[RMDB]
RNA sequence: GGGAACGACUCGAGUAGAGUCGAAAAUAAGAGCAUGUACGAAUCACGAUAUGAGAGUUCCUGGUGAAUGCCGGGUACAAGGAAAGGUAUUAAUCUCCCACUGCGUUCCCUUGCAGUAGGGAUAUAACUAUAAGGCUUUAUUCGUAAAGCCUUAUAGAAAAGAAACAACAACAACAAC
Reactivity to DMS in 0.01 (KOAc 150mM, MgCl2 10mM, bicine 150mM(pH8.5), 24C), signal-to-noise 8, nucleotides 027 to 126: u010a070a080g020a100g010c080a050u000g020u010a050c030g010a080a070u000c040a090c100g000a130u000a100u010g000a120g010a200g010u000u000c000c010u000g010g010u000g000a120a060u010g010c020c010g000g010g010u000a030c040a060a080g010g010a050a060a060g000g010u000a040u010u000a060a080u010c110u000c000c000c000a040c010u000g000c000g000u000u000c010c010c010u000u010g010c010a010g010u000a060g020g000g000a020u000a010u000a060a190
Reactivity to 2A3 in 0.01 (KOAc 150mM, MgCl2 10mM, bicine 150mM(pH8.5), 24C), signal-to-noise 4, nucleotides 027 to 126: u170a030a010g040a010g060c060a040u130g020u070a020c050g040a100a050u070c060a020c150g070a060u050a080u300g140a090g000a010g060u020u030c000c010u020g000g050u040g120a300a070u240g000c000c010g000g000g020u030a030c020a020a020g070g010a090a050a030g040g010u080a040u070u130a130a070u040c020u010c020c000c000a000c000u010g000c010g020u040u050c000c010c000u010u040g010c000a010g000u090a150g020g010g000a000u040a000u000a050a000